This 177-nucleotide RNA was probed chemically with DMS and 2A3. For 2A3, 14,745 sequencing reads were counted. 2A3 adducts were read by reverse transcription with SuperScript II with manganese.
[RMDB]
RNA sequence: GGGAACGACUCGAGUAGAGUCGAAAACUUGCAGUGGGUAGCCGCGACCCGAGGCGAUGUCGUGCAGGUAGGCCACCGCCUGCUGGCCCGACGCCAUGGUGCGCUGAUCGAGCACCGUGACGGUGCCAGGCUUCUAUAAUUUCGAUUAUAGAAGCCUAAAAGAAACAACAACAACAAC
Reactivity to DMS in 0.01 (KOAc 150mM, MgCl2 10mM, bicine 150mM(pH8.5), 24C), signal-to-noise 9, nucleotides 027 to 126: c060u000u010g010c050a100g010u010g010g010g010u010a090g010c040c060g010c050g010a080c030c020c020g010a120g010g010c020g010a080u010g010u000c030g020u000g000c020a060g010g010u000a060g010g010c050c080a070c190c130g010c010c010u000g010c020u000g010g010c010c030c020g000a100c080g000c070c020a030u000g010g010u000g010c010g010c050u000g010a110u010c150g000a160g000c010a010c000c010g020u000g010a040c050g010g020u000g010c040c110
Reactivity to 2A3 in 0.01 (KOAc 150mM, MgCl2 10mM, bicine 150mM(pH8.5), 24C), signal-to-noise 6, nucleotides 027 to 126: c020u050u120g020c020a030g040u090g050g040g020u060a030g050c030c020g030c070g060a070c000c010c030g030a070g000g010c050g060a130u160g050u080c040g020u050g000c010a010g010g030u030a020g000g040c050c030a080c040c070g030c000c000u010g000c030u020g050g000c010c040c010g020a030c020g000c020c010a030u040g020g000u030g010c040g000c060u080g050a200u160c080g030a010g030c000a000c010c000g010u040g040a030c060g020g010u030g020c020c030